Conditions: 150 mM KOAc, 10 mM MgCl2 and 150 mM bicine (pH 8.5), 24 C. This 177-nucleotide RNA was probed chemically with DMS. The DMS profile rests on 566 reads. Reactivities are given for positions 27 through 126.
[RMDB]
RNA sequence: GGGAACGACUCGAGUAGAGUCGAAAAACCACCUCUUAGAAAACAAACUUGUUUUACAAGCUGUUGUGGAUGCUAAUAUAAAUCUUGACUCCUAUCGCAUUUACAAGGAGGCUGAUGCUAUUUAUAAUCCAUAUCCCACUUUCGAGUGGGAUAUGGAAAAAGAAACAACAACAACAAC
Reactivity to DMS in 0.01 (KOAc 150mM, MgCl2 10mM, bicine 150mM(pH8.5), 24C), signal-to-noise 1, nucleotides 027 to 126: a180c010c000a130c060c010u000c050u020u000a120g050a200a100a060a050c020a050a090a210c080u000u000g010u000u000u000u020a130c000a020a030g020c140u000g050u000u000g010u020g000g040a040u020g000c050u000a170a110u000a060u000a030a010a060u010c100u000u000g000a050c060u000c020c000u000a050u000c180g020c080a040u030u000u000a030c050a090a100g000g010a050g010g000c100u000g030a020u000g000c180u000a020u000u000u020a060u040a190a090